[RMDB]
RNA sequence: GGGAACGACUCGAGUAGAGUCGAAAAGACUUUCACCAACGCCGAUUCGUCCACGUCGACGAACUCGACGACGCUACCCAGACGCUUGCAGAACUAACCGAGAACGUGAGUGCACUCAUGACCGAGUGGAAAGAGACACGGCGCGAACUGCAUGAAAGCUCGCUUAGAUAUUCGUAUCUAAGCGAGCAAAAGAAACAACAACAACAAC
Reactivity to 2A3 in 0.01 (KOAc 150mM, MgCl2 10mM, bicine 150mM(pH8.5), 24C), signal-to-noise 2, nucleotides 027 to 156: g100a020c090u140u110u110c130a100c040c050a090a090c000g030c020c010g010a030u020u050c010g020u000c050c000a170c110g160u200c090g090a030c000g000a000a020c040u000c000g000a010c020g040a020c040g000c060u090a160c040c060c010a070g020a010c070g020c020u010u050g030c000a010g030a240a090c080u020a030a050c030c080g060a040g010a130a150c050g020u010g020a030g040u070g000c020a000c010u040c010a030u050g070a070c070c130g000a000g000u030g000g100a050a080a000g080a010g010a000c000a000c030g050g000c020g000c020g050a020a020c000u010g020c000a040u090g010a120a090a010

An RNA of 207 nucleotides, treated with 2A3 and read out base by base. It was measured as part of the RMDB library OK3TST. Conditions: 150 mM KOAc, 10 mM MgCl2 and 150 mM bicine (pH 8.5), 24 C. Reactivities are given for positions 27 through 156. For 2A3 the reverse transcriptase was SuperScript II with manganese.